[RMDB]
RNA sequence: GGGAACGACUCGAGUAGAGUCGAAAAAGCGUAAAUACUUCUAGCAAUGCAACUUCUAAAGAUGAAUCAUUCACUUCAAAUUCAUCAAAUGCACAAGCAACUGAUAGUGUAAGUGAAAGAACGCAUAGAUAAAUAGCGUCUUCGGACGCUAUUUAUCAAAAGAAACAACAACAACAAC
Reactivity to DMS in 0.01 (KOAc 150mM, MgCl2 10mM, bicine 150mM(pH8.5), 24C), signal-to-noise 2, nucleotides 027 to 126: a090g010c020g040u020a060a160a060u020a110c050u000u000c060u000a080g000c100a090a070u010g010c080a120a060c120u000u000c030u000a080a070a050g030a040u000g000a080a070u010c070a080u000u000c030a060c040u000u020c050a050a040a120u010u000c080a000u010c020a000a090a230u000g000c010a060c300a080a180g000c030a030a050c300u000g000a020u000a060g000u010g000u010a010a010g000u000g000a020a010a060g010a020a050c120g000c030a060u000a080
Reactivity to 2A3 in 0.01 (KOAc 150mM, MgCl2 10mM, bicine 150mM(pH8.5), 24C), signal-to-noise 2, nucleotides 027 to 126: a000g000c020g000u030a040a160a020u100a130c010u070u000c050u060a020g000c010a060a040u140g010c030a090a090c040u110u090c000u100a170a070a020g040a050u060g050a060a070u050c000a070u070u070c040a040c040u060u020c030a030a150a210u100u030c020a030u010c000a000a030a030u100g030c000a040c040a170a120g010c000a030a070c070u020g010a040u010a060g060u030g050u080a040a020g020u000g040a020a040a050g010a030a000c050g000c070a020u090a120